RNA sequence: GGGAACGACUCGAGUAGAGUCGAAAACCAGGUCGACACGCUCGGCACCUUCGUCGACUUUGACCUGCUCUGCCAGCGGCAAUGGCACAACACCGAUGACGACCCCAACCGCCAGAGCCGCCGCGCCUGCCAGAGUAGCCUUCGGGCUACUCUGGCAAAAAGAAACAACAACAACAAC
Reactivity to 2A3 in 0.01 (KOAc 150mM, MgCl2 10mM, bicine 150mM(pH8.5), 24C), signal-to-noise 1, nucleotides 027 to 126: c000c000a010g000g000u000c000g040a010c040a030c180g120c160u000c010g050g000c040a040c000c090u300u300c080g000u000c000g000a030c000u030u030u020g000a000c040c000u010g120c030u050c040u190g180c000c070a000g000c000g000g020c000a010a110u040g000g030c000a000c000a130a180c100a060c130c100g010a000u100g080a130c030g080a070c100c000c000c000a000a130c000c070g000c000c010a000g010a010g070c000c100g000c000c010g000c000g030c000c000